The data come from the RNA Mapping Database (RMDB), library OK2TRN. Chemical mapping of a 177-nucleotide RNA with DMS. DMS (dimethyl sulfate) methylates the pairing face of unpaired adenines and cytosines. For DMS the reverse transcriptase was MarathonRT. The RNA was probed in 150 mM KOAc, 10 mM MgCl2 and 150 mM bicine (pH 8.5) at 24 C. Reactivities are given for positions 27 through 126.
[RMDB]
RNA sequence: GGGAACGACUCGAGUAGAGUCGAAAAACAAGGUCAGGGCCAGUCAUGGAAGACAAAUUGGGCAGAGACUUUGAGUUGGACAGCCAUGAGAUAGCCUGGAGGAGGAAAAGAAGAUCAUGUGAUUUAAGAUGCUCCCAGUAUUCGUACUGGGAGCAUCAAAAGAAACAACAACAACAAC
Reactivity to DMS in 0.01 (KOAc 150mM, MgCl2 10mM, bicine 150mM(pH8.5), 24C), signal-to-noise 1, nucleotides 027 to 126: a070c050a090a070g000g020u010c000a080g020g000g010c040c040a170g020u010c070a110u000g010g010a070a090g020a130c070a090a020a110u010u000g000g000g040c030a060g000a160g000a040c030u000u000u010g000a070g020u000u000g000g000a120c130a090g000c000c000a090u000g000a080g000a040u010a030g000c050c060u000g020g020a210g040g010a060g010g000a090a040a050a130g040a070a050g000a080u010c070a110u010g010u010g010a060u000u020u000a130a140